[RMDB]
RNA sequence: GGGAACGACUCGAGUAGAGUCGAAAACGCUGGAACACAUAGAAGUGAGAAUGCCGGUAUGAGUAGCGAAAGACAGGUGAGAAUCCUGUCCACCGUAAGACUAAGGUUUCCAGGGGAAGGCUCGUCCCUAAGGCCGUCAAUUCGUUGACGGCCUUAGAAAAGAAACAACAACAACAAC
Reactivity to DMS in 0.01 (KOAc 150mM, MgCl2 10mM, bicine 150mM(pH8.5), 24C), signal-to-noise 1, nucleotides 027 to 126: c040g010c020u000g000g020a070a060c040a040c040a190u000a070g030a110a110g000u000g010a240g010a180a080u000g010c010c030g010g000u010a050u000g000a030g020u030a070g000c020g000a090a160a130g020a020c000a000g010g020u000g010a140g000a210a140u010c000c010u000g000u000c040c000a070c230c010g010u050a050a100g010a070c080u000a090a080g000g000u000u000u000c040c020a090g000g000g000g000a040a030g000g010c060u000c050g020u000c020c050
Record summary
Chemical mapping of a 177-nucleotide RNA with DMS. For DMS the reverse transcriptase was MarathonRT. Reactivities are given for positions 27 through 126. Conditions: 150 mM KOAc, 10 mM MgCl2 and 150 mM bicine (pH 8.5), 24 C. Values are in units of 0.01, from 0 to 300, in steps of 10.